[RMDB]
RNA sequence: GGGAACGACUCGAGUAGAGUCGAAAACUUCUGGAACCGAAGUUCCGCGACGGCGGUGUCGAUGCGCUCGAUCACUUCCUUCGCGCCGAAGCCCGUCAGGUACUUCGCCUUCUCGCCCGGCGUCAUGAGAAACGGUGUCGUUCGCGACACCGUUUCUAAAAGAAACAACAACAACAAC
Reactivity to 2A3 in 0.01 (KOAc 150mM, MgCl2 10mM, bicine 150mM(pH8.5), 24C), signal-to-noise 1, nucleotides 027 to 126: c010u010u010c020u080g090g110a120a090c070c060g020a060a020g030u010u000c000c010g070c090g030a020c000g020g040c010g000g070u050g010u110c040g000a040u120g100c070g150c070u020c060g080a110u230c010a040c110u040u050c000c000u040u000c040g000c010g030c000c060g070a070a040g040c010c000c000g020u070c030a020g000g140u020a100c080u030u020c000g080c030c000u090u030c000u010c060g090c000c000c000g000g000c000g050u100c040a050u180g110
This 177-nucleotide RNA was probed chemically with 2A3. For 2A3 the reverse transcriptase was SuperScript II with manganese.